[RMDB]
RNA sequence: GGGAACGACUCGAGUAGAGUCGAAAAGCGAACGCCUCAAGCCGAGCGGCCCAAUCAACUAUGGGUGUCGGACUUCACCUAUGUCUCGACCUGGCAGGGUUGGCUGUAUGUGGCGUUCGUCAUCGACGUAUUUGCGCGGCGAAUCGUAGGCUGGCGCGGUUUAGUGGCUUUUCGAAGCCACUAAACCAAAAGAAACAACAACAACAAC
Reactivity to 2A3 in 0.01 (KOAc 150mM, MgCl2 10mM, bicine 150mM(pH8.5), 24C), signal-to-noise 1, nucleotides 027 to 156: g000c000g030a000a000c000g020c010c010u110c020a020a050g040c080c000g100a080g090c000g070g000c000c000c000a000a090u290c180a270a130c120u210a150u170g040g000g070u100g170u110c040g000g040a120c000u190u010c030a040c020c030u170a300u210g000u000c010u060c270g110a100c020c030u000g120g070c080a210g000g040g000u060u110g050g000c070u060g030u200a270u070g030u100g000g000c000g000u000u000c000g000u000c000a020u120c040g010a040c050g010u040a090u060u300u210g000c000g000c000g050g000c000g000a000a000u170c120g120u130a000g020g150c010u060g130g000c040g000c000